Conditions: 150 mM KOAc, 10 mM MgCl2 and 150 mM bicine (pH 8.5), 24 C. An RNA of 177 nucleotides, treated with DMS and read out base by base. It was measured as part of the RMDB library M2PK90. For DMS, 2,169 sequencing reads were counted.

[RMDB]
RNA sequence: GGGAACGACUCGAGUAGAGUCGAAAAAUUUACGACUCUCAAGCGAAGCGAGUGCUAGCAUGCUCGAUAGCACUAAACAAAACAGGAAACUGUAAAUCGAGCAAUCGCUAGAGUCGUUCCCAUACAACCAUAGUAAUUUAUUCGUAAAUUACUAUGGAAAAGAAACAACAACAACAAC
Reactivity to DMS in 0.01 (KOAc 150mM, MgCl2 10mM, bicine 150mM(pH8.5), 24C), signal-to-noise 3, nucleotides 027 to 126: a110u010u000u000a140c000g020a020c000u000c000u010c030a190a060g000c010g010a040a090g010c020g000a030g000u010g010c000u010a040g010c030a300u000g000c010u000c010g020a040u000a030g000c030a020c020u010a060a100a160c230a120a030a080a030c020a010g010g000a120a130a170c010u000g010u000a030a050a090u000c030g000a010g000c000a010a050u000c020g030c020u000a090g000a010g000u000c000g010u000u000c000c000c000a010u010a030c240a080a130